[RMDB]
Chemical mapping of a 207-nucleotide RNA with 2A3. The RNA was probed in 150 mM KOAc, 10 mM MgCl2 and 150 mM bicine (pH 8.5) at 24 C. The data come from the RNA Mapping Database (RMDB), library M2RFPK.
RNA sequence: GGGAACGACUCGAGUAGAGUCGAAAAGAAAGAAAGAAAUUAGCUCGCCAGUUAGCGAGGUCUGUCCUCACACGACAGAUAAUCGGGUGCAACUCCCGCCCCUUUUCCGAGGGUCAUCGGAACCAAAAAAACUCAGGCAACUUCGGUUGCCUGAGAACGUUAGGCUUACCUUCGGGUAAGCCUAACGAAAAGAAACAACAACAACAAC
Reactivity to 2A3 in 0.01 (KOAc 150mM, MgCl2 10mM, bicine 150mM(pH8.5), 24C), signal-to-noise 1, nucleotides 027 to 156: g060a020a070a000g080a050a070a000g070a050a190a100u140u090a070g040c000u010c000g010c020c050a210g120u200u100a000g000c010g000a000g000g000u000c000u010g000u000c020c000u030c010a040c000a010c040g000a000c020a000g000a000u000a020a040u020c020g000g000g010u010g000c000a000a000c010u030c020c000c000g000c000c000c000c000u070u180u050u000c010c000g010a010g000g000g010u050c050a000u000c010g000g000a020a020c040c020a000a010a000a010a050a050a070c000u000c000a010g000g000c010a010a000c000u050u090c180g110g010u010u020g000c000c000u010g000a000g000a000a000